[RMDB]
An RNA of 207 nucleotides, treated with DMS and 2A3 and read out base by base.
RNA sequence: GGGAACGACUCGAGUAGAGUCGAAAAAGGAAGGCUGUGUAUAAGAGGGAAAGGAGAAAGUAAGGUUGACCAGGGCACUGUAUCCAGCAAGUGGCCUAGGCCCAGGAUGUUCACAAUGGUUCACUGUAGCUUUGUAACAUUUCUUGGCACAGCUCUAAGUCGCAUAAUAUUUCGAUAUUAUGCGACUAAAAGAAACAACAACAACAAC
Reactivity to DMS in 0.01 (KOAc 150mM, MgCl2 10mM, bicine 150mM(pH8.5), 24C), signal-to-noise 3, nucleotides 027 to 156: a100g000g010a060a080g000g040c010u010g030u010g110u000a130u020a060a070g010a100g000g020g020a050a070a080g010g000a140g020a070a040a110g010u020a090a220g000g040u010u000g010a060c000c000a150g010g020g010c030a040c080u010g000u000a100u010c030c040a100g050c060a080a080g010u010g030g020c000c030u000a130g040g010c030c000c020a240g010g010a030u000g000u000u000c100a010c050a000a090u000g030g020u000u000c170a100c080u000g010u010a240g040c010u000u000u000g000u000a060a070c000a070u000u000u000c010u000u010g000g000c010a020c060a040g000c000u000c040u000a140
Reactivity to 2A3 in 0.01 (KOAc 150mM, MgCl2 10mM, bicine 150mM(pH8.5), 24C), signal-to-noise 6, nucleotides 027 to 156: a010g120g010a030a010g030g000c030u020g020u010g040u060a070u080a300a050g020a070g050g020g050a030a060a040g080g020a050g050a020a040a000g040u120a080a050g030g000u040u050g020a030c020c040a020g020g010g020c050a020c070u040g030u070a060u040c010c020a010g010c040a150a060g040u080g120g010c000c020u050a070g040g000c010c000c000a000g030g010a020u040g020u070u040c110a020c020a070a060u100g020g050u020u020c070a080c230u180g110u230a030g000c010u000u000u020g010u040a020a000c000a030u010u060u100c010u000u020g020g000c010a010c010a020g010c000u000c010u070a050